[RMDB]
RNA sequence: GGGAACGACUCGAGUAGAGUCGAAAAGAUAUGGAGCCACUAAGGCGCACACGUAGAUUAAACAUUAUAUCGGAAACGAUAUAAUGUUUAAUUGAAGUGUGAACUACGCUAUGUGGCUCCUAAGUCACUAUCCUUGUCACUUCGGUGACAAGGAUAGAAAAGAAACAACAACAACAAC
Reactivity to DMS in 0.01 (KOAc 150mM, MgCl2 10mM, bicine 150mM(pH8.5), 24C), signal-to-noise 1, nucleotides 027 to 126: g000a010u020a300u000g050g000a040g020c000c000a000c000u010a110a130g000g010c000g030c000a010c010a010c000g020u040a300g000a000u000u000a000a000a040c000a000u000u000a010u000a000u000c000g000g000a100a090a210c000g030a000u000a020u000a000a000u000g020u000u000u000a000a000u000u010g000a190a300g000u020g020u000g000a120a050c120u000a300c010g000c000u000a300u000g000u030g020g000c000u000c010c000u000a010a070g010u000c070a200